[RMDB]
RNA sequence: GGGAACGACUCGAGUAGAGUCGAAAAUGACCGCUCAAGAUUACGGAUACUUUGUCAGUAAUCAAUUUAUGUUUUAAUAAAUAAUUUGAGCUAUGGCCUGACGGACAGCCGGGUCAAAUGCCGAAAACGAGUAGGUGCUCUUCGGAGCAUCUACUCGAAAAGAAACAACAACAACAAC
Reactivity to 2A3 in 0.01 (KOAc 150mM, MgCl2 10mM, bicine 150mM(pH8.5), 24C), signal-to-noise 4, nucleotides 027 to 126: u140g050a020c010c010g020c010u030c020a050a060g000a000u000u010a000c010g030g000a020u050a140c140u150u140u270g030u020c000a000g000u000a010a000u000c010a000a000u020u020u020a030u020g030u000u210u100u150a080a070u040a010a030a030u130a070a120u040u030u030g010a010g010c060u090a090u110g000g000c010c020u050g050a030c010g030g050a030c030a030g010c020c000g030g000g000u000c010a010a040a070u110g010c000c010g010a020a010a000a030
Reactivity to DMS in 0.01 (KOAc 150mM, MgCl2 10mM, bicine 150mM(pH8.5), 24C), signal-to-noise 2, nucleotides 027 to 126: u000g010a010c020c000g020c010u000c020a000a030g000a000u000u000a020c000g000g000a010u010a050c300u020u050u090g000u010c000a060g000u010a000a000u000c000a100a030u000u000u000a000u010g000u040u030u030u050a110a010u010a010a020a030u000a150a210u030u020u000g000a020g000c010u040a150u050g000g010c030c060u030g000a090c060g000g040a050c120a270g000c020c000g000g000g000u000c000a050a020a040u060g000c000c010g010a300a020a050a170